[RMDB]
Structure probing data (2A3 and DMS) for a 207-nucleotide construct.
The data come from the RNA Mapping Database (RMDB), library M2RFPK.
Reactivities are given for positions 27 through 156.
The reactions ran in a buffer of 150 mM KOAc, 10 mM MgCl2 and 150 mM bicine (pH 8.5), at 24 C.
RNA sequence: GGGAACGACUCGAGUAGAGUCGAAAACUUCAUCCCCUGAUCAAGGAUGCCCGAAACGGUGAGGCGGAAAGCAAAUUAAAUAACGUCAACCCAUCGGGACGGUUGGCCAGUUAAGAAGUGAGGAUUCAAAAGAUCGAACCGUUCGCGGUUCGAUCAACACGAAUAACUCGUUCGCGAGUUAUUCGUGAAAAGAAACAACAACAACAAC
Reactivity to 2A3 in 0.01 (KOAc 150mM, MgCl2 10mM, bicine 150mM(pH8.5), 24C), signal-to-noise 4, nucleotides 027 to 156: c000u030u020c000a040u050c010c000c000c000u020g000a040u040c010a020a020g070g000a070u120g050c000c010c010g030a070a110a000c090g000g010u070g020a160g060g000c020g050g030a100a060a030g090c210a130a060a140u190u190a080a110a090u210a130a020c020g000u000c010a010a010c000c000c000a040u030c000g000g010g020a020c000g050g000u000u000g020g000c020c010a010g020u020u070a060a040g020a020a010g010u030g060a080g100g000a090u110u160c120a080a070a050a080g000a000u010c000g000a010a010c000c000g000u050u080c220g010c020g090g000u000u000c000g000a000u010c000a000a000
Reactivity to DMS in 0.01 (KOAc 150mM, MgCl2 10mM, bicine 150mM(pH8.5), 24C), signal-to-noise 1, nucleotides 027 to 156: c000u000u040c040a030u000c000c000c000c020u000g090a070u010c020a130a110g030g020a160u010g000c070c000c000g010a090a210a150c120g000g000u040g010a160g030g000c010g000g000a120a140a080g000c110a190a110a170u010u000a030a060a100u040a060a190c030g000u000c020a060a020c030c000c000a210u000c060g000g000g040a110c000g010g000u010u000g010g030c010c040a100g000u000u000a060a120g010a100a090g010u000g050a070g010g000a120u000u000c020a110a050a050a170g000a010u000c000g000a000a010c020c010g040u000u000c230g020c000g010g000u000u010c040g000a000u000c010a010a050